[RMDB]
RNA sequence: GGGAACGACUCGAGUAGAGUCGAAAAUAAGCAUAUUCAACUUAAGGGGCACACUAAAUACUGUAAUCUGGGAGCAUAACUCAGAUUUCUUUUCUUCUUUGCUCAGUAUAAGUUGCAUGAUCAUAGAAGAUUUAUGUAGAAGUCAGAAAUCAAGGUCACUCUGUGGCGGUUUCGACCGCCACAGAGUAAAAGAAACAACAACAACAAC
Reactivity to 2A3 in 0.01 (KOAc 150mM, MgCl2 10mM, bicine 150mM(pH8.5), 24C), signal-to-noise 1, nucleotides 027 to 156: u050a020a000g000c020a000u030a040u130u040c020a090a070c030u110u210a080a000g020g020g010g030c020a000c000a020c010u130a000a140a070u220a110c090u120g030u080a020a000u000c020u020g010g010g000a080g190c120a100u100a130a030c010u010c020a000g000a020u000u050u100c000u000u040u000u000c020u030u000c000u000u020u070g000c000u000c000a020g070u080a130u070a220a160g130u250u100g040c040a080u030g010a000u040c000a000u030a020g000a040a030g000a040u060u190u000a120u150g030u020a050g000a000a000g000u000c010a000g060a070a050a010u080c020a050a050g000g020u050c040